[RMDB]
RNA sequence: GGGAACGACUCGAGUAGAGUCGAAAAGGACACCUGCCAGCCACUUACCCCGCCCAAUGAGCGAGUGUCCAGCGUAACGAUUCCGCAGGCUUCCAGGGGCUGGUCAAUACUCCGCUGGAGCUGCAGCCCUCACCAUGACGUUCGCGUCAUGGUGAGGAAAAGAAACAACAACAACAAC
Reactivity to 2A3 in 0.01 (KOAc 150mM, MgCl2 10mM, bicine 150mM(pH8.5), 24C), signal-to-noise 3, nucleotides 027 to 126: g060g000a000c000a020c030c010u000g010c000c000a060g020c040c000a070c010u040u080a130c000c020c000c000g020c010c010c000a100a160u240g040a110g040c040g010a040g000u030g060u050c000c010a000g000c040g060u040a080a010c040g040a080u140u000c050c010g040c020a010g070g020c070u170u070c030c000a020g020g040g040g030c120u020g000g000u000c010a040a080u130a210c020u010c020c000g060c120u020g010g000a000g040c020u030g000c000a040g030c000
Reactivity to DMS in 0.01 (KOAc 150mM, MgCl2 10mM, bicine 150mM(pH8.5), 24C), signal-to-noise 2, nucleotides 027 to 126: g000g000a040c020a110c020c000u000g050c020c020a040g050c090c060a190c160u030u010a200c100c000c000c040g000c000c030c050a010a120u030g000a120g030c000g080a090g030u010g110u000c000c060a210g000c060g000u010a090a100c180g000a120u030u030c060c020g000c050a160g000g090c030u000u020c040c030a100g010g010g010g000c070u050g000g040u010c250a020a140u000a040c050u000c050c000g000c060u000g000g000a090g030c060u020g010c040a030g000c140